[RMDB]
RNA sequence: GGGAACGACUCGAGUAGAGUCGAAAAGCGAUAGCGUUCGCGCUAUCGCAAAUAAAUUGAGCGGUUUAAAUUUCGAGGCCAUAACCGCUGAUGGCCUCGAAAAAACUCGACAGUUCGCUGUCGAGAACUGAAGUUAAUACUUCGGUAUUAACUUCAGAAAAGAAACAACAACAACAAC
Reactivity to DMS in 0.01 (KOAc 150mM, MgCl2 10mM, bicine 150mM(pH8.5), 24C), signal-to-noise 5, nucleotides 027 to 126: g010c000g020a010u000a000g010c010g030u010u010c220g030c010g020c000u000a000u000c000g020c000a000a040a050u000a040a060a140u000u010g000a080g010c070g000g010u000u000u000a050a070a150u000u000u000c000g000a010g000g010c000c000a010u000a070a080c040c050g000c050u000g000a020u000g000g000c000c000u000c000g000a000a000a020a040a040a080c010u010c000g010a010c000a010g000u000u000c220g010c000u000g000u000c010g000a010g000a050a090
Reactivity to 2A3 in 0.01 (KOAc 150mM, MgCl2 10mM, bicine 150mM(pH8.5), 24C), signal-to-noise 4, nucleotides 027 to 126: g000c010g000a010u010a010g010c010g020u040u050c210g000c000g000c080u000a000u000c000g000c000a000a000a000u010a000a010a030u080u110g040a030g030c040g040g130u070u180u240a070a180a150u080u100u010c000g000a010g010g000c010c000a010u020a060a060c010c020g000c040u010g010a020u020g000g000c000c010u000c000g000a000a000a000a000a000a010c010u010c000g000a000c000a000g020u050u090c190g010c140u000g000u020c000g000a000g000a020a000